[RMDB]
RNA sequence: GGGAACGACUCGAGUAGAGUCGAAAAUGCCUACGCAUUUUUAAUGGCCAAGGAUGGAAUAACCAAACUGGCUGAUGUUGAAGCGGACGUCGCAGCACGUGCUGAUGACGAAGGCUUCAUCACAUUACUCAAUAACCAACUUCGGUUGGUUAUUGAGAAAAGAAACAACAACAACAAC
Reactivity to DMS in 0.01 (KOAc 150mM, MgCl2 10mM, bicine 150mM(pH8.5), 24C), signal-to-noise 2, nucleotides 027 to 126: u000g010c020c090u000a120c270g000c020a000u000u010u000u020u040a080a150u000g010g010c020c000a030a060g030g000a240u020g000g000a230a160u010a100a090c010c020a010a110a250c060u000g000g000c010u000g020a080u000g010u000u000g010a010a000g000c010g000g000a300c010g010u000c000g010c000a000g000c010a230c300g000u000g020c030u020g010a060u020g020a010c020g000a040a300g020g020c000u030u000c020a000u000c050a020c130a070u020u000a170
Reactivity to 2A3 in 0.01 (KOAc 150mM, MgCl2 10mM, bicine 150mM(pH8.5), 24C), signal-to-noise 2, nucleotides 027 to 126: u020g020c000c050u090a070c080g000c000a020u030u000u020u010u190a130a070u190g010g000c020c040a070a090g030g000a000u020g000g060a160a200u080a250a080c010c000a010a030a020c030u000g000g000c030u030g090a070u080g000u000u020g010a000a010g020c010g040g040a010c010g010u000c010g000c010a000g000c020a030c260g140u240g000c030u000g010a240u100g000a000c000g010a090a020g020g000c000u000u020c000a000u010c000a010c000a040u080u150a070